[RMDB]
RNA sequence: GGGAACGACUCGAGUAGAGUCGAAAAUUUUGAUGGUUCUAUAUCCAAUUCGAGAGGCGCAGCCCUUAGUUUUGCCUUAUGAUGGAAUUUGAUAAUUCCCUAACAUUAGUUCAAACUAGAUUGGUCAACAUAACUUCACAUUCGUGUGAAGUUAUGUAAAAGAAACAACAACAACAAC
Reactivity to 2A3 in 0.01 (KOAc 150mM, MgCl2 10mM, bicine 150mM(pH8.5), 24C), signal-to-noise 3, nucleotides 027 to 126: u070u090u040u090g080a070u050g020g000u100u000c040u040a060u020a040u190c020c020a040a040u080u140c050g010a030g040a080g160g000c170g030c270a010g020c000c000c000u000u030a030g030u020u040u080u100g000c000c000u040u050a020u030g050a040u080g020g010a020a020u010u000u060g120a090u100a180a030u010u030c020c000c000u000a100a000c010a010u010u040a020g010u130u160c030a030a040a000c010u000a020g010a110u040u070g070g010u040c020a010
Reactivity to DMS in 0.01 (KOAc 150mM, MgCl2 10mM, bicine 150mM(pH8.5), 24C), signal-to-noise 8, nucleotides 027 to 126: u000u000u000u010g010a140u010g010g010u000u000c030u000a100u000a120u010c030c030a050a090u000u010c070g000a090g010a100g010g020c030g030c150a070g020c040c020c030u000u000a050g000u010u000u000u010g020c300c020u000u000a030u000g010a140u000g000g010a020a010u000u000u000g010a180u020a050a060u000u000c010c000c240u000a070a120c070a030u000u010a020g000u000u010c130a030a050a070c030u000a020g000a110u000u000g000g010u000c170a070

Structure probing data (2A3 and DMS) for a 177-nucleotide construct.
For DMS the reverse transcriptase was MarathonRT.
For DMS, 8,521 sequencing reads were counted.
For 2A3 the reverse transcriptase was SuperScript II with manganese.